The record gives the reactivity of an RNA of 177 nucleotides to DMS and 2A3. For DMS, 9,743 sequencing reads were counted. For 2A3 the reverse transcriptase was SuperScript II with manganese. The RNA was probed in 150 mM KOAc, 10 mM MgCl2 and 150 mM bicine (pH 8.5) at 24 C. For DMS the reverse transcriptase was MarathonRT.
RNA sequence: GGGAACGACUCGAGUAGAGUCGAAAACGGGCCGAAGCCCUUCCAGCCAUGGCGGCGCAGCUGGUCCAGGCCGCGGUGGUACCCGGUACGCGCGUAUGCGUAGGCCGUGACGGUCUUGUCGUCGGCCCACCUUCGAAUGUUUCGACAUUCGAAGGUGAAAAGAAACAACAACAACAAC
Reactivity to DMS in 0.01 (KOAc 150mM, MgCl2 10mM, bicine 150mM(pH8.5), 24C), signal-to-noise 4, nucleotides 027 to 126: c200g010g000g000c010c070g020a160a100g000c040c040c050u000u010c020c040a180g020c030c060a060u000g010g010c300g000g020c060g020c080a100g040c060u020g010g030u010c030c050a160g010g000c010c010g050c020g020g050u000g000g000u010a120c060c020c010g000g020u000a080c080g000c030g000c090g000u030a040u050g010c000g020u000a200g000g000c000c000g000u020g020a110c070g000g020u010c130u010u010g000u020c040g010u030c020g000g000c020c010
Reactivity to 2A3 in 0.01 (KOAc 150mM, MgCl2 10mM, bicine 150mM(pH8.5), 24C), signal-to-noise 7, nucleotides 027 to 126: c050g000g010g000c010c050g110a110a040g050c010c010c000u050u050c030c000a020g020c030c010a080u080g160g000c020g000g020c090g020c070a030g020c030u130g050g070u060c040c010a040g050g000c010c000g030c020g040g000u040g010g020u080a090c030c000c000g010g030u160a150c060g030c000g000c020g090u270a100u300g020c000g020u060a150g110g000c010c000g020u050g020a020c060g000g050u080c030u080u150g080u060c060g030u020c000g020g000c000c000